[RMDB]
RNA sequence: GGGAACGACUCGAGUAGAGUCGAAAAUGAGAUAGCUAAAUCACCUCGGUAUGAUUAGGGUGAGACCUAGGAACCGUAGGGGUAUUCUCCAAGGAAGCUUUUGCAGUGACGCCCAUGUAAGUGGGAUAAGAACCAACCCACUUCGGUGGGUUGGUAACAUACCAACGAUCUUCGGAUCGUUGGUAUGAAAAGAAACAACAACAACAAC
Reactivity to 2A3 in 0.01 (KOAc 150mM, MgCl2 10mM, bicine 150mM(pH8.5), 24C), signal-to-noise 2, nucleotides 027 to 156: u130g010a040g030a120u060a040g060c060u100a010a080a140u110c070a050c010c000u020c020g020g000u290a290u170g080a080u050u090a030g000g000g070u080g080a110g090a060c010c010u010a020g000g080a050a050c010c000g010u020a010g000g010g010g010u020a110u060u040c050u040c010c010a020a000g040g040a070a020g060c000u050u100u110u030g100c090a050g010u030g020a030c120g010c000c000c000a010u090g030u120a050a150g010u020g020g010g030a010u010a070a050g070a000a000c000c000a000a000c000c010c000a010c020u030u020c150g000g000u000g010g010g010u000u000g000g000u000a000a000
Reactivity to DMS in 0.01 (KOAc 150mM, MgCl2 10mM, bicine 150mM(pH8.5), 24C), signal-to-noise 1, nucleotides 027 to 156: u000g030a210g020a050u010a040g000c010u000a040a080a130u000c000a100c020c010u000c000g000g020u030a120u000g020a230u000u000a040g010g000g000u020g030a300g010a170c020c000u000a030g020g090a140a120c000c020g050u000a090g020g010g020g010u020a100u020u020c000u000c030c080a090a100g000g000a080a210g030c030u000u000u000u000g020c000a150g000u010g020a090c030g010c000c020c010a020u000g000u040a070a170g030u000g000g000g030a060u020a000a060g000a090a060c000c010a030a060c010c000c000a000c000u020u000c200g000g000u010g000g000g020u000u000g000g010u000a020a110
Chemical mapping of a 207-nucleotide RNA with 2A3 and DMS. High DMS reactivity at an A or C suggests that its Watson-Crick edge is free. High 2A3 reactivity points to a flexible backbone, as in loops and unpaired stretches. Reactivities are given for positions 27 through 156. The data come from the RNA Mapping Database (RMDB), library M2RFPK. The reactions ran in a buffer of 150 mM KOAc, 10 mM MgCl2 and 150 mM bicine (pH 8.5), at 24 C.